RNA sequence: GGGAACGACUCGAGUAGAGUCGAAAAAAGGGCCCAGAGGGGAAUGAGCCUCGUCGUCGACGAAGGGGUGCAUUCCGAAGAGCUGGCCUGGCGUCGUCCGGCUCCCUCGACCGCACCGGAGCGCUAGCCCUAAAUACGUGUUCGCACGUAUUUAGGGAAAAGAAACAACAACAACAAC
Reactivity to DMS in 0.01 (KOAc 150mM, MgCl2 10mM, bicine 150mM(pH8.5), 24C), signal-to-noise 5, nucleotides 027 to 126: a050a060g010g000g010c110c040c060a060g000a110g020g010g000g020a030a010u000g000a210g000c000c000u000c010g000u000c010g000u010c240g010a140c060g010a060a040g010g000g010g010u000g000c010a020u000u000c000c000g000a100a100g010a130g020c030u010g000g000c030c010u020g010g000c020g010u010c100g010u000c020c000g010g010c280u000c010c010c020u000c110g000a080c130c100g000c160a120c020c000g000g000a070g000c020g010c020u000a120g010
Reactivity to 2A3 in 0.01 (KOAc 150mM, MgCl2 10mM, bicine 150mM(pH8.5), 24C), signal-to-noise 3, nucleotides 027 to 126: a000a000g050g000g000c080c120c020a010g030a010g090g260g010g000a010a010u020g010a010g010c000c020u000c000g020u000c010g030u060c110g080a300c030g010a050a020g040g000g010g000u030g010c000a010u010u010c020c010g020a100a040g050a030g070c030u030g000g020c000c010u000g010g000c010g010u100c020g150u020c010c000g010g010c040u020c010c010c000u070c050g150a160c070c060g020c040a060c010c000g000g000a000g000c020g000c030u040a080g050